[RMDB]
RNA sequence: GGGAACGACUCGAGUAGAGUCGAAAAAGCUUCACCUUCUCUUCAUGCCUAAACACCCAAUCGUCUCCGAGAAGAACCUUCAGAGUCGACGAUCGGACUUUAACGACGACGUAUUGGAGAUUGUUAGCGAGGAAGAGAUAAGACAAAGCAACGUCUAUAAUAAUGAGGCUUUCGAGCCUCAUUAUUAAAAAGAAACAACAACAACAAC
Reactivity to 2A3 in 0.01 (KOAc 150mM, MgCl2 10mM, bicine 150mM(pH8.5), 24C), signal-to-noise 2, nucleotides 027 to 156: a010g020c020u110u090c050a120c000c020u040u030c020u010c020u010u010c010a080u200g020c010c020u070a100a090a010c010a020c000c000c000a000a000u000c000g000u000c040u020c020c020g020a020g000a090a000g010a060a070c020c020u110u110c060a070g030a140g300u110c070g050a110c080g020a060u060c070g050g000a020c040u060u070u050a070a020c000g050a000c060g020a000c000g040u160a010u000u000g020g000a020g000a070u030u100g020u060u000a010g000c040g010a060g250g000a000a010g000a000g000a000u070a050a000g000a000c020a030a090a030g070c030a050a020c070g090u020c030u040a050
Reactivity to DMS in 0.01 (KOAc 150mM, MgCl2 10mM, bicine 150mM(pH8.5), 24C), signal-to-noise 2, nucleotides 027 to 156: a040g020c020u010u000c000a080c060c090u010u000c000u000c020u020u000c030a160u000g000c080c020u000a080a050a080c030a130c040c020c000a030a080u000c010g000u010c000u000c020c020g010a300g030a060a080g000a010a060c020c030u000u010c080a130g010a240g000u000c130g010a140c110g000a130u000c040g040g010a160c000u010u000u000a060a300c120g040a060c050g010a020c010g050u000a040u010u010g000g020a120g010a050u010u000g040u010u010a060g010c020g000a190g020g020a040a030g010a030g000a040u010a080a100g020a100c060a050a040a070g030c060a040a040c100g010u000c010u000a220